Background:
Source: RMDB library OK3TST, as collected in RNAgym. This 207-nucleotide RNA was probed chemically with DMS and 2A3. Values cover nucleotides 27 to 156. Values are in units of 0.01, from 0 to 300, in steps of 10. 2A3 adducts were read by reverse transcription with SuperScript II with manganese.
RNA sequence: GGGAACGACUCGAGUAGAGUCGAAAAUAUGUGAAACAUUCUUGCAGUCCUGUACAGAGUUCAACCGGUCAGGCAUCAAAAUUCGAAGGGUGCGGCAUACUAGCACAAACCUGGCCAUAGCAUUGCCUUCAAACAAGAAAGAAAACAUGAAGUGUGCCUCAUUUGACAAAUUCGUUUGUCAAAUGAGAAAAGAAACAACAACAACAAC
Reactivity to DMS in 0.01 (KOAc 150mM, MgCl2 10mM, bicine 150mM(pH8.5), 24C), signal-to-noise 2, nucleotides 027 to 156: u010a060u000g010u000g010a180a090a150c060a150u000u010c040u000u000g030c030a120g040u010c050c050u000g000u000a110c100a090g000a180g030u000u000c060a100a060c080c030g050g020u010c010a060g020g000c030a070u010c060a050a060a070a170u010u010c120g020a090a060g030g000g010u010g020c030g000g000c070a080u010a050c040u000a090g010c050a070c020a020a070a080c040c000u000g010g050c000c040a100u000a060g020c030a040u000u000g000c030c010u000u000c050a040a050a040c050a050a050g000a050a050a130g000a050a100a130a080c030a100u000g010a070a080g020u000g040u000g010c040
Reactivity to 2A3 in 0.01 (KOAc 150mM, MgCl2 10mM, bicine 150mM(pH8.5), 24C), signal-to-noise 5, nucleotides 027 to 156: u210a040u060g070u030g050a110a080a010c020a070u060u070c020u050u030g010c030a020g040u080c020c030u040g010u060a050c050a050g060a020g070u070u110c050a080a050c040c040g000g030u020c010a010g020g070c010a040u090c040a030a170a100a080u210u150c060g060a040a010g060g000g020u010g010c000g000g000c010a040u090a120c040u080a070g010c020a020c010a040a040a030c000c010u010g010g000c020c020a040u060a020g020c010a040u020u100g040c000c000u040u040c000a060a070a090c030a060a060g120a110a120a010g070a020a090a030a010c030a020u160g030a050a020g040u020g010u010g030c000